[RMDB]
The record gives the reactivity of an RNA of 177 nucleotides to 2A3 and DMS. Reactivities are rounded to 0.1 and cut off at 0 and 3. For 2A3, 3,927 sequencing reads were counted. High 2A3 reactivity points to a flexible backbone, as in loops and unpaired stretches. In probing experiments dimethyl sulfate is read out at A N1 and C N3, which are open when not base-paired. The reactions ran in a buffer of 150 mM KOAc, 10 mM MgCl2 and 150 mM bicine (pH 8.5), at 24 C.
RNA sequence: GGGAACGACUCGAGUAGAGUCGAAAAGGAUAGUAGUUCGCUACUAUCCAAAAGAUCUAUGAAAAUAGAUCAAAAAUGGUGGUGCUCACCAAUGAGCAAAAAAAACACAUAGCUUCGGCUAUGUGAACCUACUUAACUUCUUCGGAAGUUAAGUAGGAAAAGAAACAACAACAACAAC
Reactivity to 2A3 in 0.01 (KOAc 150mM, MgCl2 10mM, bicine 150mM(pH8.5), 24C), signal-to-noise 1, nucleotides 027 to 126: g010g000a000u010a000g010u000a000g000u030u040c190g010c080u000a000c000u000a000u000c000c000a000a000a000a030g000a000u000c010u000a010u020g020a040a000a020a030u010a010g010a000u010c030a030a060a040a020a060u210g010g020u020g030g060u050g000c020u020c010a010c010c030a020a110u110g000a010g000c000a000a000a020a000a000a020a020a030c000a000c000a000u000a000g000c010u060u040c300g050g000c000u000a000u010g010u000g000a000a010
Reactivity to DMS in 0.01 (KOAc 150mM, MgCl2 10mM, bicine 150mM(pH8.5), 24C), signal-to-noise 2, nucleotides 027 to 126: g000g020a000u000a000g010u000a000g000u000u010c280g020c010u000a010c000u010a000u010c000c000a010a020a070a170g000a010u000c000u000a010u000g000a130a050a160a020u000a000g000a000u010c000a040a040a100a120a090u010g000g010u000g000g030u000g000c030u000c010a120c030c050a070a090u010g000a010g020c000a000a000a000a040a030a060a040a120c010a000c000a000u000a000g000c000u010u010c260g000g010c000u000a000u000g000u000g030a070a060